[RMDB]
RNA sequence: GGGAACGACUCGAGUAGAGUCGAAAAAAGCUAAAUAUCUUCGCCUCAUUGCACCUCACCCCUGCGCGUAUUGAGCCAAAUUGUCUGACAAAUGUCUGACGGUCCUCACUGUGUAACCGGUAUUAAUGCGCUCGCGCGCAACCGUAUGAAGAUGAAACAUUUUGGAUUAAUUCGUUAAUCCAAAAUGAAAAGAAACAACAACAACAAC
Reactivity to 2A3 in 0.01 (KOAc 150mM, MgCl2 10mM, bicine 150mM(pH8.5), 24C), signal-to-noise 5, nucleotides 027 to 156: a000a000g050c030u120a050a080a070u150a070u040c020u050u040c030g020c020c020u030c040a100u040u130g010c020a040c010c030u070c020a090c000c030c010c010u020g000c020g000c010g020u030a060u120u180g020a010g000c020c020a030a090a100u110u100g030u020c020u030g020a010c020a050a300a110u260g010u010c030u040g020a010c010g010g020u040c000c010u060c030a080c050u070g010u020g020u160a080a030c020c020g010g000u040a050u110u150a130a060u090g010c030g000c070u020c030g050c000g000c000g000c010a010a010c040c000g070u110a070u170g060a040a040g060a060u100g040a070a050a040
Reactivity to DMS in 0.01 (KOAc 150mM, MgCl2 10mM, bicine 150mM(pH8.5), 24C), signal-to-noise 3, nucleotides 027 to 156: a060a080g020c040u020a070a070a120u000a040u000c020u000u000c030g020c040c040u000c060a160u010u020g040c020a100c040c020u030c050a140c030c000c010c020u000g010c010g030c060g010u000a100u000u000g040a050g000c000c030a060a090a110u000u000g020u000c020u010g000a100c040a100a080a130u010g000u000c010u000g010a120c040g000g020u000c020c030u000c040a080c070u000g030u010g030u010a080a090c110c030g020g030u000a080u000u000a060a070u000g030c050g040c000u000c160g010c240g000c000g010c010a020a030c030c010g000u000a060u000g000a050a060g010a130u000g020a180a090a170